Notes: Chemical mapping of a 207-nucleotide RNA with 2A3 and DMS.

[RMDB]
RNA sequence: GGGAACGACUCGAGUAGAGUCGAAAAAUUUAAUGCGCGAAGUCAGUAUAGGCGGAAGCCCAUUUAAAGUCACGGCGAUCGAUUUUCGUCUGAUGAAUGACGAGGCAUUCCUUUUUUGUUAGUUGCAUGGCUGCAUAAGUCGGUUGCAAGCAAGUGAGACUUGAUUGCAAUUCGUUGCAAUCAAGUCAAAAGAAACAACAACAACAAC
Reactivity to 2A3 in 0.01 (KOAc 150mM, MgCl2 10mM, bicine 150mM(pH8.5), 24C), signal-to-noise 1, nucleotides 027 to 156: a000u190u200u080a110a020u080g000c250g000c020g130a090a000g000u000c030a000g060u070a100u150a140g030g000c020g000g060a070a000g000c020c000c020a020u100u120u050a100a130a010g010u000c030a000c060g000g000c000g000a030u010c030g030a080u300u000u070u030c010g050u000c020u060g070a100u030g020a070a120u060g010a010c020g010a060g030g010c010a010u040u140c020c050u080u200u050u040u090u000g060u100u010a240g000u060u000g000c040a030u150g080g040c000u010g000c090a070u060a270a050g130u070c020g070g010u020u000g000c040a060a040g010c030a040a090g090u120g090a050
Reactivity to DMS in 0.01 (KOAc 150mM, MgCl2 10mM, bicine 150mM(pH8.5), 24C), signal-to-noise 2, nucleotides 027 to 156: a110u000u020u000a060a070u010g020c050g000c050g000a140a300g000u000c020a080g020u020a070u000a040g000g010c020g010g040a130a180g000c000c010c020a070u000u000u000a080a150a300g000u000c030a010c050g060g040c020g020a000u000c110g020a300u000u000u000u000c000g060u000c000u020g000a070u000g000a140a080u000g010a070c020g000a270g020g000c000a060u010u000c020c010u010u000u010u000u010u000g030u000u000a220g010u000u000g020c000a080u000g010g050c000u000g000c150a130u000a060a040g000u000c030g030g010u000u000g000c010a030a100g020c060a070a120g000u000g010a300
It was measured as part of the RMDB library OK3TST.